Chemical mapping of a 177-nucleotide RNA with 2A3 and DMS. For 2A3 the reverse transcriptase was SuperScript II with manganese. The 2A3 profile rests on 1,556 reads. It was measured as part of the RMDB library M2PK90. Values cover nucleotides 27 to 126.
RNA sequence: GGGAACGACUCGAGUAGAGUCGAAAAGCAUUGGGAAAGUUAAUCAAAAGUGCAUCAAAACUUUCCCUAAACGAAAUCAAAAUCGUUAUGAUGCACUUAUGACAUCGAUUAAGAUGAAUAGACACAAAUGAUGAGAUUCUUUCGAGAAUCUCAUCAUAAAAGAAACAACAACAACAAC
Reactivity to 2A3 in 0.01 (KOAc 150mM, MgCl2 10mM, bicine 150mM(pH8.5), 24C), signal-to-noise 2, nucleotides 027 to 126: g050c060a050u140u240g010g000g020a020a020a020g050u050u080a070a070u100c120a050a010a140a150g000u010g040c000a000u020c010a000a090a000a230c010u000u000u000c000c000c000u010a020a000a000c000g000a030a010a050u260c160a080a000a040a130u020c020g020u050u020a060u090g000a020u000g000c000a020c010u030u060a100u100g040a020c000a000u000c010g100a130u300u140a100a120g000a020u000g000a080a050u100a010g100a010c050a000c030a220a270
Reactivity to DMS in 0.01 (KOAc 150mM, MgCl2 10mM, bicine 150mM(pH8.5), 24C), signal-to-noise 2, nucleotides 027 to 126: g010c170a080u000u030g000g000g000a000a050a050g010u000u010a110a140u010c090a040a090a050a020g050u010g020c000a020u000c010a030a060a040a030c080u010u000u000c000c000c000u010a030a000a000c000g000a020a050a100u010c290a100a070a170a090u000c010g010u000u010a220u000g010a000u010g010c010a020c000u000u000a100u010g000a140c020a000u000c000g000a130u020u010a080a150g000a010u000g010a110a120u010a060g010a140c180a050c190a040a040